Overview
An RNA of 177 nucleotides, treated with DMS and read out base by base. DMS adducts were read by reverse transcription with MarathonRT. Reactivities are given for positions 27 through 126. The RNA was probed in 150 mM KOAc, 10 mM MgCl2 and 150 mM bicine (pH 8.5) at 24 C.

RNA sequence: GGGAACGACUCGAGUAGAGUCGAAAAGAUAUGGACUGCCUUGAGCACGCCCUGUCGACGAAGACACUCUUUCGGAAACGAAAGAGUGUCAGAGACAGGGCGUGCAAUGAUGGGCAGUCCUAAGUCACGCCAUAAGUAUGUUCGCAUACUUAUGGCGAAAAGAAACAACAACAACAAC
Reactivity to DMS in 0.01 (KOAc 150mM, MgCl2 10mM, bicine 150mM(pH8.5), 24C), signal-to-noise 1, nucleotides 027 to 126: g030a020u000a300u020g000g000a030c010u000g020c000c000u000u000g010a070g000c000a010c010g050c020c000c000u010g020u000c000g010a230c300g020a110a140g000a020c000a010c000u020c010u000u000u000c000g000g000a100a070a190c010g000a000a030a010g020a000g000u000g010u000c000a010g000a130g000a020c000a020g000g000g010c000g020u000g000c000a040a020u030g000a100u000g000g010g030c000a020g000u000c000c000u000a040a060g010u000c060a300